[RMDB]
RNA sequence: GGGAACGACUCGAGUAGAGUCGAAAAGGUAAUGGACGACGGCGGCGUGGGGCGAACAGGGAUACCGGUAGUCAGUGUCUGGAACAUCCCAAGGGGCGGCGGAGCUAGCACCCCGACACGUUAAGGCAAAACUUCGCACGGUUCGCCGUGCGAAGAAGAAGGAGUAUUACUUCGGUAAUACUCCUUCAAAAGAAACAACAACAACAAC
Reactivity to DMS in 0.01 (KOAc 150mM, MgCl2 10mM, bicine 150mM(pH8.5), 24C), signal-to-noise 1, nucleotides 027 to 156: g020g040u010a110a120u010g000g020a090c010g000a070c030g010g030c020g020g030c080g010u000g010g000g040g010c060g000a030a140c040a150g020g000g000a070u000a040c020c050g030g050u020a090g000u020c010a090g020u010g010u010c030u000g010g000a080a080c080a150u030c000c020c030a130a120g000g010g000g010c050g010g030c070g000g020a060g030c070u020a130g000c070a110c010c000c000c000g000a060c050a030c040g000u030u000a060a090g020g000c030a050a050a030a090c000u010u000c000g050c060a020c030g000g040u000u000c300g020c000c000g000u010g020c000g000a000a000g020a040a090
Reactivity to 2A3 in 0.01 (KOAc 150mM, MgCl2 10mM, bicine 150mM(pH8.5), 24C), signal-to-noise 2, nucleotides 027 to 156: g070g020u080a080a040u160g050g010a000c020g000a010c060g050g030c050g000g010c040g040u080g000g020g060g020c090g000a040a030c030a080g050g010g000a030u060a110c040c070g040g050u070a040g080u060c050a010g050u010g020u120c030u020g020g010a070a040c040a070u050c010c010c020a070a070g030g020g000g000c070g000g000c060g080g020a000g040c050u090a050g010c010a050c010c000c000c000g010a050c040a010c060g060u060u050a030a050g070g040c050a060a020a020a070c000u000u000c000g000c000a000c000g000g000u040u020c100g000c060c020g000u000g000c000g000a000a000g000a000a020